[RMDB]
Description
An RNA of 177 nucleotides, treated with 2A3 and DMS and read out base by base. The 2A3 profile rests on 979 reads. The RNA was probed in 150 mM KOAc, 10 mM MgCl2 and 150 mM bicine (pH 8.5) at 24 C. The data come from the RNA Mapping Database (RMDB), library OK2TST.
RNA sequence: GGGAACGACUCGAGUAGAGUCGAAAAAUUUAAAGCAUUGAUAAUUAACGCAUCCAUGUCUUCACGUGGUACUUGUCUAUUUUCUAAAACGAAUGCAAGUUCUUCGUAUACUUUUGGCAUACAAAACGUAGCGAAAAAUUUUCGAAUUUUUCGCUACAAAAGAAACAACAACAACAAC
Reactivity to 2A3 in 0.01 (KOAc 150mM, MgCl2 10mM, bicine 150mM(pH8.5), 24C), signal-to-noise 1, nucleotides 027 to 126: a000u100u140u060a030a010a000g030c020a030u060u080g040a040u060a250a080u170u090a090a000c030g010c000a050u000c040c000a010u010g030u000c010u090u110c060a000c010g010u030g010g020u010a020c000u000u030g010u050c070u100a120u090u050u010u010c030u080a160a100a060a000c130g030a040a000u020g030c010a000a010g040u030u000c000u010u010c020g010u030a060u010a130c060u090u090u160u120g050g000c060a020u080a130c030a040a240a070a030c080
Reactivity to DMS in 0.01 (KOAc 150mM, MgCl2 10mM, bicine 150mM(pH8.5), 24C), signal-to-noise 1, nucleotides 027 to 126: a090u000u000u000a090a050a090g010c050a020u000u000g030a060u000a070a100u000u010a100a090c200g000c100a080u000c010c010a010u040g000u000c060u010u000c180a080c040g030u000g000g000u000a020c040u000u010g010u000c140u000a090u000u030u000u000c080u000a090a040a120a120c300g000a040a010u000g000c030a030a060g000u000u000c020u000u000c040g010u000a050u000a060c100u030u000u000u000g020g010c080a050u000a010c150a040a020a110a150c150
DMS adducts were read by reverse transcription with MarathonRT.